[RMDB]
RNA sequence: GGGAACGACUCGAGUAGAGUCGAAAAUUCUCAGCACUCAUCAAGAAGUAGGCUUAGGCCAAUUGCAUGGUGGUGAAAGUAGAGGGAAGGUAGCACUUCGACGCCUCUAAGUACGCUGUGGGAGUAGAAAACUGGACAUCGUUCGCGAUGUCCAGAAGGUUAAUCGCAAGUUCGCUUGCGAUUAACCAAAAGAAACAACAACAACAAC
Reactivity to DMS in 0.01 (KOAc 150mM, MgCl2 10mM, bicine 150mM(pH8.5), 24C), signal-to-noise 1, nucleotides 027 to 156: u000u040c030u010c000a160g040c020a090c020u000c040a110u010c010a160a120g010a080a170g000u010a110g020g000c050u000u030a090g080g050c030c040a040a220u010u010g000c090a130u010g000g040u000g020g020u010g000a080a070a080g040u010a010g010a000g000g000g000a150a150g010g020u040a100g040c110a120c060u000u000c030g050a060c030g040c000c040u010c030u000a030a060g030u000a090c060g030c030u000g030u000g000g000g010a130g020u000a070g010a090a020a120a120c000u000g000g010a010c000a000u000c000g000u000u010c300g030c120g010a020u000g040u000c000c000a000g000a000a040
Reactivity to 2A3 in 0.01 (KOAc 150mM, MgCl2 10mM, bicine 150mM(pH8.5), 24C), signal-to-noise 1, nucleotides 027 to 156: u060u000c020u000c020a010g020c020a040c040u130c020a090u030c050a050a120g060a110a010g070u160a060g090g030c030u060u070a120g030g030c020c020a030a170u110u090g040c040a040u020g030g000u000g000g050u110g080a130a130a000g030u020a010g000a000g020g050g030a020a010g000g000u020a030g000c040a010c060u040u050c020g030a030c070g040c010c000u010c000u000a010a030g010u040a000c040g000c060u000g020u090g020g000g020a070g000u070a110g210a070a040a020a020c000u000g000g000a000c000a000u000c000g000u070u030c020g000c000g060a000u020g000u020c000c000a000g000a000a000